This 207-nucleotide RNA was probed chemically with 2A3 and DMS. The reactions ran in a buffer of 150 mM KOAc, 10 mM MgCl2 and 150 mM bicine (pH 8.5), at 24 C. Source: RMDB library OK3TST, as collected in RNAgym. For 2A3 the reverse transcriptase was SuperScript II with manganese. The 2A3 profile rests on 1,777 reads. DMS adducts were read by reverse transcription with MarathonRT. Values cover nucleotides 27 to 156.

[RMDB]
RNA sequence: GGGAACGACUCGAGUAGAGUCGAAAACACCGAUGCGCUUAGCAUCACGGACAACUGAACGAUCAUAAACAGAACACUGGCGGUCAAUAUGACUCCGUCUCUGAGACGACAAUCAUAACGUUUUGUUAGUAAAAUAUUUCCUAUAUGAGCUAAAAUACAUAUCACGCUUUUUCGAAAGCGUGAUAUGAAAAGAAACAACAACAACAAC
Reactivity to 2A3 in 0.01 (KOAc 150mM, MgCl2 10mM, bicine 150mM(pH8.5), 24C), signal-to-noise 3, nucleotides 027 to 156: c070a020c000c040g010a020u010g000c040g030c200u110u300a040g000c000a000u010c020a000c040g030g020a040c030a080a040c070u070g040a060a030c030g020a080u090c020a090u200a160a100a040c040a050g030a110a000c020a000c090u040g050g000c070g010g000u060c000a080a140u130a110u300g020a010c020u040c020c020g000u000c020u000c000u070g090a100g020a040c070g050a030c060a050a040u120c050a080u120a100a040c020g000u000u010u030u100g020u020u030a070g040u040a070a070a070a070u150a080u030u040u070c010c020u090a090u030a070u290g050a030g010c040u020a060a040a000a000u080a030
Reactivity to DMS in 0.01 (KOAc 150mM, MgCl2 10mM, bicine 150mM(pH8.5), 24C), signal-to-noise 2, nucleotides 027 to 156: c030a110c010c020g010a050u000g030c000g000c240u000u000a170g060c030a010u000c020a090c120g020g010a180c040a090a100c100u020g000a090a110c090g000a070u000c060a070u000a020a120a180c010a060g010a070a060c060a080c070u010g010g000c050g010g000u010c030a120a180u020a100u000g000a080c030u000c010c030g000u000c020u030c040u020g020a180g020a120c100g050a060c050a030a070u000c050a080u010a030a200c050g010u000u020u000u010g010u000u000a160g000u000a060a060a120a140u000a070u000u000u000c070c020u000a170u000a110u000g010a180g020c080u000a100a120a090a110u000a170